[RMDB]
RNA sequence: GGGAACGACUCGAGUAGAGUCGAAAAACAGCCAGCUGGGACUGAGGAUUGCGACUUUUGUCAAGGAUGCUGGCGUAAUGGUUAAAUGCCGCCCGUCUUGAAACACGGACCAAGGAGUCUAACGUCUAUGCGAGUGUUUGGGUGUAAAACCCGUACGGUGAUUAGGAUACUUCGGUAUCCUAAUCACAAAAGAAACAACAACAACAAC
Reactivity to DMS in 0.01 (KOAc 150mM, MgCl2 10mM, bicine 150mM(pH8.5), 24C), signal-to-noise 1, nucleotides 027 to 156: a020c050a200g030c010c010a070g020c010u000g010g000g050a070c030u000g010a110g000g000a210u000u000g020c130g050a120c030u000u000u000u000g030u000c030a070a120g030g020a120u000g010c020u000g000g010c020g000u010a010a080u010g140g020u000u000a030a040a060u040g000c030c030g000c000c000c000g050u020c040u000u000g000a170a180a110c110a020c020g020g000a100c040c090a120a120g000g020a020g040u000c040u010a080a090c020g000u000c020u000a020u000g020c020g000a090g010u010g030u000u000u000g000g040g070u000g000u010a040a070a100a090c010c010c030g010u010a130c300g000
Reactivity to 2A3 in 0.01 (KOAc 150mM, MgCl2 10mM, bicine 150mM(pH8.5), 24C), signal-to-noise 3, nucleotides 027 to 156: a000c010a000g000c020c000a000g030c020u100g050g070g030a040c040u060g000a020g020g060a130u080u180g080c070g060a110c010u050u070u150u140g030u040c070a060a090g090g030a090u100g000c010u010g000g000c000g020u010a020a040u070g000g020u050u080a060a070a050u130g000c030c020g020c030c000c000g030u040c040u030u080g030a090a050a020c040a020c000g020g000a020c000c020a210a100g040g020a100g020u000c020u080a110a020c040g030u000c050u090a020u170g040c050g060a050g070u040g000u000u090u070g010g020g000u020g000u030a040a080a000a010c020c000c050g000u080a060c070g020

The data come from the RNA Mapping Database (RMDB), library PDB130. Structure probing data (DMS and 2A3) for a 207-nucleotide construct. DMS (dimethyl sulfate) methylates the pairing face of unpaired adenines and cytosines. The RNA was probed in 150 mM KOAc, 10 mM MgCl2 and 150 mM bicine (pH 8.5) at 24 C. The 2A3 profile rests on 1,492 reads. For DMS the reverse transcriptase was MarathonRT.